[RMDB]
RNA sequence: GGGAACGACUCGAGUAGAGUCGAAAAGAGCCACAUGCGCACUGUGUUUACUGAAGUUGUGUUUGUGCUCACUUGAGGUGUUUUUCCCUUACCAGUUGAGCAUUCACAGAGGAAAGUCAUAUACCGGUUAAACUGUGCCAUUUUGCCUUUGAGUGUACCUAUUAGGACGAUUCGUCGUCCUAAUAGGAAAAGAAACAACAACAACAAC
Reactivity to 2A3 in 0.01 (KOAc 150mM, MgCl2 10mM, bicine 150mM(pH8.5), 24C), signal-to-noise 9, nucleotides 027 to 156: g060a030g020c030c010a020c010a030u030g010c040g040c100a020c010u060g040u040g060u180u080u100a040c030u060g120a110a090g100u150u060g020u020g040u040u140u150g050u030g000c000u000c000a000c000u020u060g040a030g000g030u080g130u120u090u070u150u230c020c000c000u010u040a100c060c030a030g030u130u050g090a000g000c000a010u030u090c020a010c000a020g070a060g030g160a130a070a030g060u100c070a020u110a020u050a240c040c020g040g000u040u100a030a040a000c020u030g000u010g000c000c000a010u030u040u050u050g020c030c000u050u050u100g100a090g040u140g040u110a070
Reactivity to DMS in 0.01 (KOAc 150mM, MgCl2 10mM, bicine 150mM(pH8.5), 24C), signal-to-noise 3, nucleotides 027 to 156: g000a140g010c020c040a100c110a050u000g030c070g040c030a030c030u000g020u010g040u000u010u000a120c080u000g020a130a170g010u010u000g020u000g020u010u000u000g030u000g010c000u000c010a040c030u000u000g030a050g030g000u000g020u000u000u000u000u020c100c000c010u000u000a030c040c130a050g000u010u020g020a060g000c000a030u000u000c040a100c020a090g010a130g030g000a060a070a130g010u000c080a090u000a100u010a140c050c030g020g010u000u010a030a070a070c020u020g010u000g030c020c040a140u000u000u000u000g010c010c040u000u010u000g000a130g020u000g010u000a210